[RMDB]
RNA sequence: GGGAACGACUCGAGUAGAGUCGAAAAUGUCUUCUCAUGGCUAAUUCUGCGCUCCUUUUGCCUUCGGAAAAUGGGCGUCCCCCUAAGUUUUACGAUCAUCUUACAGGCAUCCAAACUAUUCGUGGUAGCGUAUGGUAUACUUCGGUAUACCAUACGCAAAAGAAACAACAACAACAAC
Reactivity to 2A3 in 0.01 (KOAc 150mM, MgCl2 10mM, bicine 150mM(pH8.5), 24C), signal-to-noise 2, nucleotides 027 to 126: u060g000u010c030u110u030c060u030c010a050u130g060g040c000u020a100a130u110u060c030u150g040c000g000c010u050c000c010u060u090u010u090g130c020c000u140u160c040g030g000a050a050a050a030u020g030g000g020c040g050u040c030c020c010c010c000u030a110a070g030u070u030u040u130a050c010g010a050u070c000a020u040c010u040u030a060c050a010g000g000c010a000u010c020c000a040a030a040c040u070a080u130u030c100g090u060g070g000u040a030
Reactivity to DMS in 0.01 (KOAc 150mM, MgCl2 10mM, bicine 150mM(pH8.5), 24C), signal-to-noise 2, nucleotides 027 to 126: u010g030u010c040u000u010c030u000c070a090u010g010g000c040u000a050a100u000u010c020u010g000c010g020c020u000c010c050u000u010u000u010g000c020c050u000u010c180g000g010a030a020a040a070u000g010g040g000c010g000u000c040c000c000c030c070u000a090a070g000u010u000u000u010a070c060g000a060u010c060a040u000c070u000u000a080c130a090g020g000c000a030u000c020c030a060a090a080c100u000a100u000u000c060g020u000g010g010u020a110
Structure probing data (2A3 and DMS) for a 177-nucleotide construct.
2A3 adducts were read by reverse transcription with SuperScript II with manganese.
High 2A3 reactivity points to a flexible backbone, as in loops and unpaired stretches.
The DMS profile rests on 1,781 reads.
The RNA was probed in 150 mM KOAc, 10 mM MgCl2 and 150 mM bicine (pH 8.5) at 24 C.